This 177-nucleotide RNA was probed chemically with 2A3 and DMS. Reactivities are rounded to 0.1 and cut off at 0 and 3. For DMS, 2,113 sequencing reads were counted.
RNA sequence: GGGAACGACUCGAGUAGAGUCGAAAACAGCACUCCUAGAGGAUACUGGUAUCGCGCUUCUUCCGGGCCUCGCGCUCCUCCUUGAGACCCAGUUCCAGAAGCUGAGGGACGUCGAUGAUGAGGGAGAAACUUCAGCUCAAUUCGUUGAGCUGAAGUUAAAAGAAACAACAACAACAAC
Reactivity to 2A3 in 0.01 (KOAc 150mM, MgCl2 10mM, bicine 150mM(pH8.5), 24C), signal-to-noise 1, nucleotides 027 to 126: c040a030g100c030a030c060u030c010c020u050a040g010a070g130g020a030u040a170c020u050g080g000u040a040u140c030g020c010g000c070u040u020c020u030u010c100c010g020g020g030c000c000u040c030g020c010g010c020u010c000c000u000c000c000u070u130g080a110g020a070c010c000c020a000g000u000u000c050c000a070g080a190a000g000c040u090g020a170g000g020g020a030c040g040u090c040g020a010u100g000a010u090g000a050g040g030g010a010g030a040
Reactivity to DMS in 0.01 (KOAc 150mM, MgCl2 10mM, bicine 150mM(pH8.5), 24C), signal-to-noise 2, nucleotides 027 to 126: c100a100g020c100a110c090u000c020c020u000a110g000a130g010g000a070u000a050c030u010g000g020u000a100u010c090g010c060g000c010u000u000c070u000u010c020c020g000g010g000c050c010u000c040g010c110g000c040u000c010c010u000c010c040u000u000g010a080g010a140c050c020c020a110g000u000u000c040c070a120g010a070a080g020c060u020g010a110g010g010g000a070c060g010u000c070g010a080u010g000a060u020g000a120g020g000g000a110g010a060